[RMDB]
Structure probing data (2A3 and DMS) for a 177-nucleotide construct.
For DMS the reverse transcriptase was MarathonRT.
The RNA was probed in 150 mM KOAc, 10 mM MgCl2 and 150 mM bicine (pH 8.5) at 24 C.
RNA sequence: GGGAACGACUCGAGUAGAGUCGAAAACGGUUUGUCCGGAGCUAGGGUUUCAUGGCCGGCAGAGCCCCGCACCUUUGCGGGGUCCGGUGCGCUCCUGACGACCCUUGAAAAUCCGCGGGAAGGAAUACACUUUACCGCCGUUCGCGGCGGUAAAGUGAAAAGAAACAACAACAACAAC
Reactivity to 2A3 in 0.01 (KOAc 150mM, MgCl2 10mM, bicine 150mM(pH8.5), 24C), signal-to-noise 1, nucleotides 027 to 126: c080g000g140u050u060u300g020u000c020c020g000g000a000g000c000u070a070g050g230g000u080u080u100c150a200u280g060g010c000c000g000g000c080a040g060a040g240c120c000c000c000g000c000a040c070c050u170u300u300g000c000g000g030g000g020u000c000c060g010g010u040g010c000g000c000u030c040c000u000g000a000c010g000a000c010c000c000u000u150g060a000a000a000a060u040c000c000g020c090g040g050g000a090a150g040g020a150a000u140a010
Reactivity to DMS in 0.01 (KOAc 150mM, MgCl2 10mM, bicine 150mM(pH8.5), 24C), signal-to-noise 1, nucleotides 027 to 126: c140g010g000u050u000u000g000u010c110c130g050g000a090g070c000u000a200g000g000g000u000u010u000c010a050u000g000g000c010c000g020g020c300a000g000a230g000c000c000c000c000g000c000a020c300c080u000u000u000g000c060g000g000g050g000u000c000c000g000g000u000g060c170g000c000u020c000c020u000g000a010c000g000a000c000c000c050u000u000g020a040a030a070a020u000c000c060g040c030g000g000g000a130a040g000g000a210a190u160a240